[RMDB]
RNA sequence: GGGAACGACUCGAGUAGAGUCGAAAAUCAUCUAUGUUCGCAUAGAUGAACACAGCCUUGUAGUUUUAGUGGACUUUAGGCUAAAGAAUUUCACUAGUAAAAUAAUCGGGUGUUUCGACACCCGAAAUAUGUCAGAUCUAUUCGUAGAUCUGACAUAAAAAGAAACAACAACAACAAC
Reactivity to 2A3 in 0.01 (KOAc 150mM, MgCl2 10mM, bicine 150mM(pH8.5), 24C), signal-to-noise 4, nucleotides 027 to 126: u030c000a000u010c000u010a020u010g030u030u040c200g000c120a000u000a000g010a000u000g010a040a010c090a000c010a010g000c000c000u050u040g110u100a050g000u000u000u070u020a020g000u010g020g000a010c000u040u020u020a000g020g000c010u060a100a130a070g100a070a130u140u190u110c010a010c020u030a030g140u190a050a090a100a290u230a080a140u050c010g020g000g000u000g020u040u080u090c140g030a000c000a000c000c000c000g000a000a000a000
Reactivity to DMS in 0.01 (KOAc 150mM, MgCl2 10mM, bicine 150mM(pH8.5), 24C), signal-to-noise 3, nucleotides 027 to 126: u000c000a010u000c000u000a000u000g000u010u010c220g020c000a020u010a000g000a010u000g000a020a140c170a070c120a130g000c000c000u000u000g010u010a010g010u000u000u000u010a010g100u000g010g000a010c000u000u000u010a020g010g000c020u000a040a070a130g000a070a140u010u010u010c000a010c000u000a040g000u010a100a060a060a070u010a130a150u000c000g000g010g020u000g000u000u000u000c170g020a050c000a010c010c000c000g000a010a020a040